The record gives the reactivity of an RNA of 177 nucleotides to 2A3 and DMS.
It was measured as part of the RMDB library OK1LIB.
For DMS the reverse transcriptase was MarathonRT.
2A3 adducts were read by reverse transcription with SuperScript II with manganese.
2A3 is a SHAPE reagent: it acylates the 2'-hydroxyl of flexible nucleotides of all four kinds.
The DMS profile rests on 1,710 reads.
RNA sequence: GGGAACGACUCGAGUAGAGUCGAAAAUUUUUUGGGCGGGGUGGCCUGGCUUCCCGGGGCUUGACUUCCCGCUGGAAUGUCUUCCCCCUCAGUGUCUGAUGGCUCUAAUUCCUCAUCACAAUGUAGGCCUGUAGAGUCGAUUCGUCGACUCUACAGGAAAAGAAACAACAACAACAAC
Reactivity to 2A3 in 0.01 (KOAc 150mM, MgCl2 10mM, bicine 150mM(pH8.5), 24C), signal-to-noise 3, nucleotides 027 to 126: u070u070u040u040u030u040g110g010g010c060g000g020g000g020u050g030g060c010c010u000g060g000c010u040u030c030c020c010g020g010g000g000c050u010u140g100a080c010u090u020c000c030c010g010c050u020g010g100a060a010u170g040u050c010u020u030c010c000c000c000c000u030c080a050g040u030g010u000c020u030g090a100u100g010g000c000u000c000u040a030a080u090u050c000c020u090c010a100u090c010a070c040a080a060u210g050u080a110g030g150
Reactivity to DMS in 0.01 (KOAc 150mM, MgCl2 10mM, bicine 150mM(pH8.5), 24C), signal-to-noise 1, nucleotides 027 to 126: u000u000u080u040u000u040g010g000g020c000g010g000g000g020u020g040g000c150c000u000g010g020c070u000u000c020c040c030g040g010g010g060c000u030u010g000a090c070u000u040c000c010c130g000c080u000g000g000a000a020u000g000u000c070u000u000c030c000c000c030c000u020c050a070g050u020g010u000c040u000g000a050u000g000g020c120u000c070u010a100a160u020u000c000c000u020c050a050u000c070a070c100a160a060u050g000u000a040g010g020